An RNA of 177 nucleotides, treated with 2A3 and DMS and read out base by base. The RNA was probed in 150 mM KOAc, 10 mM MgCl2 and 150 mM bicine (pH 8.5) at 24 C.
RNA sequence: GGGAACGACUCGAGUAGAGUCGAAAAAGCAUCGAGAUGACUCGGGAACAGCUCGAAGACCUGAUCCAGGAUCCAUUGACCGGCUUCAUCUACGCGUUCGACGACAUGCUGGCGCGCCACAACGCGAAAUUAACCCCACGUUCGCGUGGGGUUAAUUAAAAGAAACAACAACAACAAC
Reactivity to 2A3 in 0.01 (KOAc 150mM, MgCl2 10mM, bicine 150mM(pH8.5), 24C), signal-to-noise 5, nucleotides 027 to 126: a000g080c040a040u050c030g020a010g010a040u060g040a080c040u040c070g010g020g000a060a050c020a040g030c020u020c030g050a060a030g040a060c000c000u030g020a100u010c050c040a040g020g020a060u020c030c010a080u070u170g060a070c010c030g020g000c030u090u050c020a100u020c030u090a050c030g010c020g070u030u090c060g060a090c010g010a010c030a040u080g030c010u040g020g020c030g000c000g000c000c010a090c050a120a040c040g020c010g060a000
Reactivity to DMS in 0.01 (KOAc 150mM, MgCl2 10mM, bicine 150mM(pH8.5), 24C), signal-to-noise 4, nucleotides 027 to 126: a070g000c050a070u020c040g010a140g010a050u000g000a060c100u000c040g000g010g010a120a070c110a050g020c020u010c030g000a100a150g010a110c060c010u010g000a070u010c030c030a070g000g010a050u020c070c070a090u020u020g010a120c050c000g010g000c060u000u010c080a050u020c060u000a080c090g000c050g000u010u010c080g010a070c090g010a100c100a080u030g020c040u010g000g020c020g020c040g000c030c050a040c170a060a050c040g050c020g000a070